An RNA of 177 nucleotides, treated with DMS and 2A3 and read out base by base. DMS adducts were read by reverse transcription with MarathonRT. For DMS, 1,324 sequencing reads were counted. Reactivities are given for positions 27 through 126. The reactions ran in a buffer of 150 mM KOAc, 10 mM MgCl2 and 150 mM bicine (pH 8.5), at 24 C.
RNA sequence: GGGAACGACUCGAGUAGAGUCGAAAAGCAAUACGACCGCUCCAUAUCUGCCGAAUGAUGCCAAUGUAUGGUGCCUACUGUCCAACGUAACCGUUAAUCGCUGCCUUGGCGGCGAUUAACAAUCACACCACUGAUCUAUGUUCGCAUAGAUCAGUGGAAAAGAAACAACAACAACAAC
Reactivity to DMS in 0.01 (KOAc 150mM, MgCl2 10mM, bicine 150mM(pH8.5), 24C), signal-to-noise 2, nucleotides 027 to 126: g010c060a090a120u000a160c110g020a070c040c050g000c000u000c040c040a020u000a010u000c050u000g000c070c010g030a090a040u000g000a120u000g010c020c040a080a100u010g000u000a100u000g000g020u000g000c050c040u020a060c110u000g010u000c030c030a070a100c160g000u000a050a060c160c090g010u000u000a000a000u000c000g000c000u010g000c000c070u000u040g050g030c000g020g020c000g010a000u000u000a010a000c010a050a060u000c060a060c180a180
Reactivity to 2A3 in 0.01 (KOAc 150mM, MgCl2 10mM, bicine 150mM(pH8.5), 24C), signal-to-noise 2, nucleotides 027 to 126: g020c020a000a090u060a130c050g050a040c040c040g040c020u000c000c010a030u030a010u070c010u040g030c000c000g060a080a060u100g080a040u100g040c040c030a050a030u170g030u080a110u090g070g010u030g000c010c010u030a040c000u050g040u030c010c000a040a050c100g050u060a050a040c090c000g000u010u010a000a000u010c000g000c000u000g000c010c010u040u220g150g010c000g000g000c010g010a000u000u000a010a000c010a000a000u020c010a010c010a010